[RMDB]
RNA sequence: GGGAACGACUCGAGUAGAGUCGAAAAUAAAAAGGAUAAAUCACCUGGCAUUUACGAAGCAAUGCAGGAGAUGGCUUAUCUAGGUGAAAAGAUAGUAUGUGUUAAUUUUGAUCGUAGCUAUCCCGUCCAUGAUCCAAUAGUUCGCUAUUGGAUCAUGAAAAGAAACAACAACAACAAC
Reactivity to 2A3 in 0.01 (KOAc 150mM, MgCl2 10mM, bicine 150mM(pH8.5), 24C), signal-to-noise 5, nucleotides 027 to 126: u170a000a060a010a010a020g030g010a030u050a050a080a020u030c000a000c020c000u030g210g040c020a020u030u050u100a120c130g120a090a030g050c080a040a040u050g000c000a010g020g030a060g020a090u040g040g000c000u040u030a010u010c010u030a060g090g030u080g070a100a060a020a020g030a030u030a010g070u050a070u150g130u020g030u080u120a160a170u110u150u140u210g060a020u030c030g000u010a010g020c000u000a020u030c020c000c010g020u050c020
Reactivity to DMS in 0.01 (KOAc 150mM, MgCl2 10mM, bicine 150mM(pH8.5), 24C), signal-to-noise 8, nucleotides 027 to 126: u020a050a070a070a120a120g010g010a040u000a020a050a030u000c020a040c010c010u000g020g020c040a020u000u000u000a300c120g010a090a110g030c270a020a010u000g010c020a060g010g000a120g010a110u000g000g010c100u010u000a010u000c010u000a070g000g020u000g010a050a070a080a070g000a060u000a020g020u000a050u010g010u000g010u000u010a060a140u010u000u010u010g010a050u000c040g020u000a060g010c050u000a060u000c010c030c040g010u010c100
This 177-nucleotide RNA was probed chemically with 2A3 and DMS. The data come from the RNA Mapping Database (RMDB), library OK2TRN. Values cover nucleotides 27 to 126. The DMS profile rests on 10,116 reads.